Source: RMDB library OK3TST, as collected in RNAgym.
The record gives the reactivity of an RNA of 207 nucleotides to 2A3 and DMS.
The RNA was probed in 150 mM KOAc, 10 mM MgCl2 and 150 mM bicine (pH 8.5) at 24 C.
DMS adducts were read by reverse transcription with MarathonRT.
Reactivities are given for positions 27 through 156.
The DMS profile rests on 7,035 reads.

[RMDB]
RNA sequence: GGGAACGACUCGAGUAGAGUCGAAAAUCUAGAAUGGAGGUCGAUGAGUUGAUGCCUAGUAUCAACCCAGAUGAUACUCUUGCACAGCUUGUGGCAAAAAAGCUUAUUAGUUUGAAUGUGUCGACAGAAGAAUAUUCAGCCGAAGUUUCAAGGCUCACAGACGAUGUAAAUUCGUUUACAUCGUCUGAAAAGAAACAACAACAACAAC
Reactivity to 2A3 in 0.01 (KOAc 150mM, MgCl2 10mM, bicine 150mM(pH8.5), 24C), signal-to-noise 7, nucleotides 027 to 156: u050c020u040a050g060a080a060u120g060g030a030g030g040u030c040g030a040u050g010a030g030u020u040g030a110u020g000c000c060u040a040g010u010a000u010c010a020a100c020c030c030a040g010a070u060g000a000u050a150c000u040c010u030u060g000c020a020c010a020g010c020u060u050g040u090g080g000c010a080a090a000a010a080a000g020c040u100u090a080u120u060a160g090u070u070u110g100a130a060u080g030u010g030u060c030g040a030c050a050g080a100a010g030a110a060u190a120u210u190c050a010g000c000c000g020a160a020g000u010u000u000c020a030a000g010g000c040u040c050a070
Reactivity to DMS in 0.01 (KOAc 150mM, MgCl2 10mM, bicine 150mM(pH8.5), 24C), signal-to-noise 3, nucleotides 027 to 156: u000c020u010a120g020a140a090u010g020g010a060g020g010u000c010g000a140u000g010a050g020u000u000g010a060u000g020c080c150u000a150g000u010a030u000c000a010a090c040c050c070a090g010a190u000g030a040u000a070c010u020c070u000u010g020c040a120c080a080g000c070u000u000g040u010g000g000c050a000a050a080a110a010a050g030c020u000u010a100u000u000a050g010u010u000u010g020a050a050u000g030u000g000u000c020g020a090c040a110g000a060a070g010a100a080u000a130u010u000c010a070g010c020c000g000a050a120g000u000u010u000c050a050a130g020g010c020u000c030a190